[RMDB]
RNA sequence: GGGAACGACUCGAGUAGAGUCGAAAAUGCGUCUCAUCAGGCGGUCCUUCCAAUACAAGCCAGUCACCAAGGACAUAGAGGAGGCCGCUGAGCUCUUCCAGUACCAGGGCUUUGACCCUGUGUUGGUGACAGCCCAACUGCUGUCCUGUGGGAAGGCCGAUUCUAAGCUGUUCGCAGCUUAGAAUCGAAAAGAAACAACAACAACAAC
Reactivity to 2A3 in 0.01 (KOAc 150mM, MgCl2 10mM, bicine 150mM(pH8.5), 24C), signal-to-noise 4, nucleotides 027 to 156: u170g000c050g040u000c020u020c030a150u050c040a040g040g000c020g010g040u190c000c000u100u060c030c030a090a010u130a220c070a170a010g070c050c030a030g110u120c050a050c150c100a140a060g050g000a030c010a040u110a050g090a050g010g000a000g000g000c020c020g000c030u020g000a000g000c020u020c000u130u000c000c000a010g020u040a050c030c020a010g000g020g030c000u250u150u300g210a300c010c000c000u010g000u030g010u050u080g010g030u110g040a000c000a010g010c010c010c020a100a120c100u110g000c000u000g000u050c000c000u130g050u130g090g010g000a010a000g000g000c000
Reactivity to DMS in 0.01 (KOAc 150mM, MgCl2 10mM, bicine 150mM(pH8.5), 24C), signal-to-noise 2, nucleotides 027 to 156: u000g020c050g000u010c000u000c010a220u010c040a230g020g000c000g060g030u000c040c000u000u020c030c010a090a150u020a120c110a080a110g010c030c010a200g000u010c090a120c030c060a080a110g000g030a100c090a120u000a040g010a070g000g030a260g020g000c020c060g030c010u010g000a090g020c020u000c020u000u000c030c010a150g040u000a090c100c040a040g000g040g030c000u010u010u010g010a070c000c000c000u010g010u000g010u000u000g030g020u000g010a020c000a020g000c040c090c030a170a140c090u000g000c020u000g000u000c030c030u000g010u020g020g030g000a080a050g010g040c060
An RNA of 207 nucleotides, treated with 2A3 and DMS and read out base by base.
DMS (dimethyl sulfate) methylates the pairing face of unpaired adenines and cytosines.
For 2A3 the reverse transcriptase was SuperScript II with manganese.
The DMS profile rests on 3,057 reads.
The data come from the RNA Mapping Database (RMDB), library OK3TST.
DMS adducts were read by reverse transcription with MarathonRT.
Conditions: 150 mM KOAc, 10 mM MgCl2 and 150 mM bicine (pH 8.5), 24 C.